This 177-nucleotide RNA was probed chemically with 2A3 and DMS.
The RNA was probed in 150 mM KOAc, 10 mM MgCl2 and 150 mM bicine (pH 8.5) at 24 C.
Reactivities are given for positions 27 through 126.
For 2A3 the reverse transcriptase was SuperScript II with manganese.

RNA sequence: GGGAACGACUCGAGUAGAGUCGAAAACCGCGUUCACGUCGGCUUCCAAUUUCUGGCGGGCUACAGGCCUCGGCCCUCUUGUAGUGACCUGCGCCUACUUUCGCGCGGGAUGCUCGAGUUGGCUGGCAUAGUAAUUGCAGUUCGCUGCAAUUACUAUAAAAGAAACAACAACAACAAC
Reactivity to 2A3 in 0.01 (KOAc 150mM, MgCl2 10mM, bicine 150mM(pH8.5), 24C), signal-to-noise 9, nucleotides 027 to 126: c000c000g010c020g020u050u120c110a070c110g070u080c020g060g000c020u080u010c020c000a090a150u090u080u060c050u050g060g010c030g030g010g000c010u110a080c050a110g050g050c010c010u060c070g030g000c000c010c000u010c000u010u060g070u150a020g010u020g090a080c000c000u010g010c010g010c010c020u210a280c090u200u240u220c050g000c000g000c000g000g010g010a020u070g010c000u000c010g010a010g000u020u020g020g000c010u010g020g000c010
Reactivity to DMS in 0.01 (KOAc 150mM, MgCl2 10mM, bicine 150mM(pH8.5), 24C), signal-to-noise 6, nucleotides 027 to 126: c020c010g000c050g010u010u010c080a040c090g010u020c030g010g000c070u010u000c030c040a120a100u000u010u000c040u000g000g010c080g010g000g010c030u000a070c140a090g010g030c020c020u020c070g010g010c010c010c030u000c000u000u000g020u030a020g030u000g010a070c010c000u000g010c010g010c010c160u020a120c200u010u040u010c300g010c010g000c000g000g010g000a020u000g010c000u000c040g010a020g000u010u010g000g010c000u000g010g000c150